Description
An RNA of 207 nucleotides, treated with 2A3 and DMS and read out base by base. 2A3 adducts were read by reverse transcription with SuperScript II with manganese. The DMS profile rests on 3,042 reads.
[RMDB]
RNA sequence: GGGAACGACUCGAGUAGAGUCGAAAAGUCCCCAGUAUGACGUUAAACUGCUGACUCAUACAUACUGACACCGUUUGCUCAACAGGCUGUGUGGGACAAUAGAAUAACAAGGCUGUCAAUUUGAGCUAAAACUCCUCGGGGUUCGCCCCGAGGAGAAGAUGAAAGAGAAGUUCGCUUCUCUUUCAUCAAAAGAAACAACAACAACAAC
Reactivity to 2A3 in 0.01 (KOAc 150mM, MgCl2 10mM, bicine 150mM(pH8.5), 24C), signal-to-noise 3, nucleotides 027 to 156: g050u010c010c000c010c000a010g000u030a010u070g020a010c060g020u020u060a040a090a100c060u110g020c030u030g030a020c010u010c030a050u060a150c010a020u050a030c040u090g080a040c040a040c050c090g090u040u120u080g040c030u050c030a010a050c010a060g070g010c010u020g000u000g020u040g120g000g020a010c040a030a080u130a100g120a100a050u130a100a030c050a060a020g110g000c040u050g080u140c020a060a070u050u050u120g010a010g010c010u040a050a030a090a100c010u000c000c000u000c000g000g000g000g030u020u050c110g100c000c000c020c000g000a000g000g000a000g000a000a000
Reactivity to DMS in 0.01 (KOAc 150mM, MgCl2 10mM, bicine 150mM(pH8.5), 24C), signal-to-noise 2, nucleotides 027 to 156: g030u000c000c040c030c030a090g010u000a040u010g010a070c050g030u000u000a040a050a140c020u000g010c070u000g020a210c020u000c000a060u000a060c030a080u000a080c040u000g010a070c080a090c040c060g010u000u010u020g020c040u010c040a080a060c050a050g010g040c060u000g000u050g030u000g010g000g020a090c050a060a110u000a100g020a130a170u000a060a100c060a080a200g000g020c020u000g030u020c020a060a150u000u000u000g020a110g010c040u010a070a080a090a170c000u010c000c000u000c020g010g000g000g030u000u000c300g020c010c000c010c000g020a010g020g000a000g040a000a030